[RMDB]
RNA sequence: GGGAACGACUCGAGUAGAGUCGAAAAUCUAAGAGCGUAACACACACUCAGACUGUACGACAGUCUGACACACACAUACGCUAGUGUAUCGUGUGUGUGAUAUCGAUGUAGCACGAAAAAGAAAGAAUAAGUGGAAUCAUUUCGAUGAUUCCACUUAAAAAGAAACAACAACAACAAC
Reactivity to DMS in 0.01 (KOAc 150mM, MgCl2 10mM, bicine 150mM(pH8.5), 24C), signal-to-noise 4, nucleotides 027 to 126: u010c030u020a130a130g000a110g010c060g030u000a070a130c070a050c060a040c080a110c170u000c010a000g030a010c000u000g000u000a120c240g010a150c000a010g010u000c000u000g000a020c120a020c010a010c010a000c030a040u000a020c020g010c220u010a120g010u000g010u000a020u010c120g030u000g000u000g000u000g010u000g020a070u020a070u010c080g010a090u000g000u000a100g020c110a050c040g000a040a030a050a080a110g000a080a060a060g000a050a150
Reactivity to 2A3 in 0.01 (KOAc 150mM, MgCl2 10mM, bicine 150mM(pH8.5), 24C), signal-to-noise 3, nucleotides 027 to 126: u040c020u040a100a000g010a030g080c040g050u120a120a010c000a000c000a000c000a010c100u000c010a000g000a000c000u030g000u140a130c120g120a070c180a010g000u020c000u010g010a000c000a000c010a000c010a000c000a050u040a070c040g060c150u120a140g050u030g050u200a050u050c090g000u000g000u000g010u010g000u020g010a010u030a040u130c030g040a060u060g040u070a030g040c050a000c100g070a100a050a020a020a000g140a020a100a020g060a070a110